Chemical mapping of a 177-nucleotide RNA with 2A3 and DMS. For 2A3, 9,362 sequencing reads were counted. For 2A3 the reverse transcriptase was SuperScript II with manganese. Reactivities are rounded to 0.1 and cut off at 0 and 3. DMS adducts were read by reverse transcription with MarathonRT.

RNA sequence: GGGAACGACUCGAGUAGAGUCGAAAACAUUGCAGCUUCGGCUGCAAUGAAUCUCUGGUCUCUACGAGUCUACUCGAUAGAGGCUGGAGUAGUCGUUCCCGAUGGCGCCCCAAUUCGUUGGGGCGAAAACUAUCAGGGAUUUCGAUCCCUGAUAGUUAAAAGAAACAACAACAACAAC
Reactivity to 2A3 in 0.01 (KOAc 150mM, MgCl2 10mM, bicine 150mM(pH8.5), 24C), signal-to-noise 4, nucleotides 027 to 126: c000a000u010u000g000c000a000g000c010u060u090c190g180g000c000u000g000c000a000a000u000g000a010a020u030c000u000c000u010g020g020u010c010u000c000u000a000c010g020a010g060u070c150u160a240c020u090c000g010a020u010a010g000a010g000g000c000u000g000g010a000g000u010a000g000u000c000g000u000u000c000c010c010g000a140u100g110g100c040g000c010c020c010c000a020a010u040u030c120g050u060u020g000g000g000g000c000g000a000a000
Reactivity to DMS in 0.01 (KOAc 150mM, MgCl2 10mM, bicine 150mM(pH8.5), 24C), signal-to-noise 3, nucleotides 027 to 126: c010a010u010u000g000c000a000g010c010u000u010c190g030g020c000u000g000c000a000a000u000g000a110a100u010c010u000c000u000g000g010u000c000u000c000u000a030c000g000a020g010u000c190u010a080c010u000c000g000a110u000a010g000a020g000g010c000u000g000g010a030g010u000a020g010u000c010g000u000u000c000c000c000g010a070u010g000g020c010g000c000c010c000c000a010a040u000u000c210g020u000u000g000g000g010g020c000g000a000a010